RNA sequence: GGGAACGACUCGAGUAGAGUCGAAAAUGGGUGAGUUGGUCGCACCGCCAUUUGACGAACGAACGCCAAGCCUAAGCCGUCUUUGUGCAUUAAGUGGGUAAAGGUUGGUUAGUAGCGGUUUCCCCCACCAUGAGAUAAAGUUCGCUUUAUCUCAUGGAAAAGAAACAACAACAACAAC
Reactivity to 2A3 in 0.01 (KOAc 150mM, MgCl2 10mM, bicine 150mM(pH8.5), 24C), signal-to-noise 6, nucleotides 027 to 126: u050g010g030g020u040g030a140g030u080u090g080g040u090c050g030c050a020c020c020g020c010c000a030u050u020u050g050a020c020g010a300a030c010g000a020a010c010g020c000c000a080a160g100c060c000u030a070a020g020c010c010g100u060c050u040u060u070g150u130g080c040a080u100u120a050a020g030u100g170g080g000u020a050a060a020g020g000u020u010g010g000u010u010a010g000u010a010g000c020g000g000u000u000u010c000c000c000c000c000a040
Reactivity to DMS in 0.01 (KOAc 150mM, MgCl2 10mM, bicine 150mM(pH8.5), 24C), signal-to-noise 6, nucleotides 027 to 126: u000g010g010g020u000g010a110g010u010u000g020g010u000c080g010c040a060c030c050g010c090c010a040u000u000u000g010a170c040g000a100a140c020g000a120a150c140g010c000c000a020a050g010c000c010u010a070a300g010c010c010g010u000c020u000u010u000g010u000g010c180a090u010u000a010a020g010u000g000g010g010u000a020a220a040g000g020u000u000g000g000u000u000a070g010u000a070g000c080g000g000u000u000u000c000c010c010c130c110a180
Description:
This 177-nucleotide RNA was probed chemically with 2A3 and DMS. DMS adducts were read by reverse transcription with MarathonRT. DMS (dimethyl sulfate) methylates the pairing face of unpaired adenines and cytosines.